[RMDB]
RNA sequence: GGGAACGACUCGAGUAGAGUCGAAAACUCGAGGCAGCGCACAGACUGGUUGGAUCGCUCGACGAUCAUGGCAGCAUCAGCGACCAAAGCAAUCCGUUUGCUAUUGAACUCCCAGCCUGGGAGAUAUAUUAGAUGGUCAGUUCGCUGACCAUCUAAUAAAAGAAACAACAACAACAAC
Reactivity to DMS in 0.01 (KOAc 150mM, MgCl2 10mM, bicine 150mM(pH8.5), 24C), signal-to-noise 3, nucleotides 027 to 126: c010u000c000g010a090g010g020c020a030g000c060g040c080a090c150a120g010a080c080u020g000g000u010u000g010g000a030u020c050g000c010u020c230g000a060c020g010a060u010c030a090u010g010g000c060a070g000c010a090u010c030a080g010c010g010a050c040c010a030a070a090g010c080a070a040u020c150c150g030u000u000u010g020c010u000a090u020u000g010a110a100c040u000c000c000c000a090g010c090c100u040g000g010g000a050g000a020u030a020u010
Reactivity to 2A3 in 0.01 (KOAc 150mM, MgCl2 10mM, bicine 150mM(pH8.5), 24C), signal-to-noise 3, nucleotides 027 to 126: c010u020c030g020a060g050g030c030a020g000c050g010c040a010c000a090g060a070c070u060g010g120u040u080g060g020a080u000c020g020c070u100c120g110a130c000g010a070u060c030a060u080g060g000c000a000g010c020a040u030c020a020g050c010g050a040c020c010a080a030a010g020c010a000a030u040c030c060g110u060u040u040g030c040u070a080u050u120g030a040a050c000u000c000c020c000a050g100c040c080u130g000g040g000a020g010a020u130a000u000
The record gives the reactivity of an RNA of 177 nucleotides to DMS and 2A3. DMS adducts were read by reverse transcription with MarathonRT. It was measured as part of the RMDB libraries RFM100 and RFMREP.